Record summary
This 177-nucleotide RNA was probed chemically with DMS and 2A3. For DMS the reverse transcriptase was MarathonRT. The 2A3 profile rests on 24,921 reads.
[RMDB]
RNA sequence: GGGAACGACUCGAGUAGAGUCGAAAAGUUAUGGAAAACGUCUUAGCUACCACUACAACAACAAUGCUGGACGGUGAUGGUUCCACUUACUCGAAACCAUCACGUAGUGGUAGUCGUUCCCAUUCAAGACUAGUAAAACUUUCGAGUUUUACUAGUCAAAAGAAACAACAACAACAAC
Reactivity to DMS in 0.01 (KOAc 150mM, MgCl2 10mM, bicine 150mM(pH8.5), 24C), signal-to-noise 7, nucleotides 027 to 126: g020u010u010a090u010g010g010a090a050a070a050c030g010u010c020u000u010a120g020c000u000a010c010c000a000c010u000a010c020a090a070c090a090a080c160a100a080u010g000c100u000g010g000a050c100g010g030u000g000a010u000g010g010u000u000c010c020a090c190u010u010a090c220u010c130g000a030a010a010c010c000a010u000c000a000c020g000u000a010g010u000g000g010u000a010g020u000c010g000u000u000c000c000c000a130u000u000c140a080a160
Reactivity to 2A3 in 0.01 (KOAc 150mM, MgCl2 10mM, bicine 150mM(pH8.5), 24C), signal-to-noise 9, nucleotides 027 to 126: g030u070u070a100u270g130g040a050a110a020a040c020g020u020c050u110u130a050g010c000u010a000c000c000a000c000u010a000c010a110a000c000a040a000c030a120a200u180g070c060u100g100g040a040c040g020g010u000g000a000u000g000g020u020u030c040c020a050c080u120u200a090c050u050c100g030a030a010a010c000c000a000u010c000a000c030g000u010a000g000u000g000g000u000a000g000u000c000g000u000u000c010c000c010a010u100u080c040a060a020